[RMDB]
RNA sequence: GGGAACGACUCGAGUAGAGUCGAAAAGCAUGUCAAUUAUAAUGCCGAUUAGGGCUGAAACAAAUACUCUCAACGACAAAACCGGCAAGUUCGUGAAUGAUGAUUGUAGGACCAUAUUGCACCUAGAACCCCCAGUAAAUUUCGAUUUACUGGGGGUAAAAGAAACAACAACAACAAC
Reactivity to DMS in 0.01 (KOAc 150mM, MgCl2 10mM, bicine 150mM(pH8.5), 24C), signal-to-noise 3, nucleotides 027 to 126: g010c040a020u010g000u000c080a110a120u010u010a100u010a130a080u010g000c000c040g000a140u010u010a110g010g000g010c010u020g010a100a100a110c110a050a100a090u010a090c080u000c020u010c050a090a080c070g000a040c070a070a070a110a080c080c060g000g030c050a030a070g010u000u000c050g010u000g020a040a090u000g000a060u000g020a100u000u000g010u000a060g000g010a060c040c050a040u000a080u010u000g010c080a080c070c030u000a110g010a130
Reactivity to 2A3 in 0.01 (KOAc 150mM, MgCl2 10mM, bicine 150mM(pH8.5), 24C), signal-to-noise 2, nucleotides 027 to 126: g070c030a010u050g000u000c000a040a020u070u160a120u120a270a120u080g010c000c040g090a090u080u180a080g110g030g000c030u020g060a100a070a010c070a020a040a020u110a060c030u040c010u050c100a050a010c010g030a010c000a010a120a010a070c030c000g060g000c030a090a000g050u100u040c010g020u020g100a110a050u110g040a010u030g010a000u040u060g020u010a010g020g060a030c010c000a000u000a050u110u110g040c000a040c060c000u040a080g110a080